[RMDB]
RNA sequence: GGGAACGACUCGAGUAGAGUCGAAAACGCGAUGGAUACGUCCAUCGCGAAUCCGUCCAAGCCGCGGACGUUAAACUGUGGCACGGUUGUGCCUAGGUGCAACCCUGCUCGCGAUGGCGGCACCCCUGCCCAAGCUACCGUCUACGGACGGUAGCAAGACUAUAGCACGGUUCGCCGUGCUAUAGUCAAAAGAAACAACAACAACAAC
Reactivity to 2A3 in 0.01 (KOAc 150mM, MgCl2 10mM, bicine 150mM(pH8.5), 24C), signal-to-noise 3, nucleotides 027 to 156: c010g000c000g000a000u000g000g010a010u010a060c210g130u040c000c000a000u000c000g000c000g000a000a010u040c010c010g000u010c000c000a050a010g020c000c010g010c000g010g000a010c000g010u000u010a020a040a020c080u190g000u090g030g000c020a010c000g000g000u010u000g010u020g010c010c020u070a170g130g040u020g000c000a000a000c010c000c000u010g010c030u090c070g040c010g110a120u160g030g000c000g020g010c010a100c000c010c000c010u030g040c030c010c020a050a020g010c000u000a000c000c000g000u010c000u010a050c260g120g000a000c000g010g000u000a000g000c000a000a000